[RMDB]
RNA sequence: GGGAACGACUCGAGUAGAGUCGAAAAAAGCCACUCCUGCUGCAGCUGCAGCGGCAGCCGCAGCCCUUCCUGGCACUGAUGCAGAGCCUGGACACUCCGGAGACUAACAGGACCCUGCACCUGACUGCCAGAGAGUUCAAUUCGUUGAACUCUCUGGAAAAGAAACAACAACAACAAC
Reactivity to 2A3 in 0.01 (KOAc 150mM, MgCl2 10mM, bicine 150mM(pH8.5), 24C), signal-to-noise 2, nucleotides 027 to 126: a020a000g030c010c000a030c040u020c020c020u040g020c000u000g020c040a030g000c030u030g060c030a230g140c060g290g000c060a000g000c010c010g010c000a020g000c000c040c000u050u010c010c010u040g030g000c010a010c070u120g060a150u120g010c010a020g030a000g020c010c010u010g080g000a010c040a000c140u090c030c050g120g110a110g030a080c030u060a080a000c000a010g050g050a200c050c060c010u010g020c010a000c010c000u050g140a120c060u030g030
Reactivity to DMS in 0.01 (KOAc 150mM, MgCl2 10mM, bicine 150mM(pH8.5), 24C), signal-to-noise 2, nucleotides 027 to 126: a060a090g010c060c040a110c140u000c080c010u000g020c010u000g040c000a030g010c030u010g000c000a190g020c210g000g020c040a010g010c020c010g050c000a010g010c000c150c040u000u000c050c040u000g010g010c020a110c040u020g030a070u000g010c010a030g000a080g010c030c000u000g000g010a110c230a100c140u010c070c100g000g000a160g010a100c050u010a090a180c030a060g020g000a150c010c020c010u000g000c010a080c010c020u000g000a090c170u000g000